[RMDB]
RNA sequence: GGGAACGACUCGAGUAGAGUCGAAAAGCAAAGGGCUCGCUAGUAAUAAUGGAUAUUGGGUUUUAUGAAGAUUGCAGAAUACAGGCAAUUCACUAUGAACGAUUGUUAAUUUUGUUGGUGCAUCCUUGCACCCAAUAUUAUUCGUAAUAUUGGGUGCAAAAGAAACAACAACAACAAC
Reactivity to 2A3 in 0.01 (KOAc 150mM, MgCl2 10mM, bicine 150mM(pH8.5), 24C), signal-to-noise 9, nucleotides 027 to 126: g030c030a030a020a040g030g000g000c030u030c030g020c020u020a000g050u070a080a080u050a090a050u100g080g020a050u040a070u130u130g050g000g030u060u050u030u060a080u090g030a040a030g040a070u020u050g010c010a020g070a140a030u180a110c030a040g030g030c000a020a010u060u060c030a030c090u100a110u180g040a060a010c020g080a110u030u060g030u060u090a090a110u060u080u040u040g010u010u020g010g020u060g040c020a020u010c000c000u000u000
Reactivity to DMS in 0.01 (KOAc 150mM, MgCl2 10mM, bicine 150mM(pH8.5), 24C), signal-to-noise 5, nucleotides 027 to 126: g010c080a060a100a080g020g000g000c050u000c050g020c030u000a060g020u000a050a040u000a040a040u020g000g010a060u020a030u020u020g000g000g000u000u000u010u000a050u030g010a110a090g010a050u000u000g010c040a060g020a090a080u000a080c150a110g000g000c020a040a040u000u010c050a090c110u000a070u020g000a060a070c090g020a090u000u000g010u000u010a070a060u020u010u010u010g020u010u000g000g010u010g010c110a080u010c040c060u000u000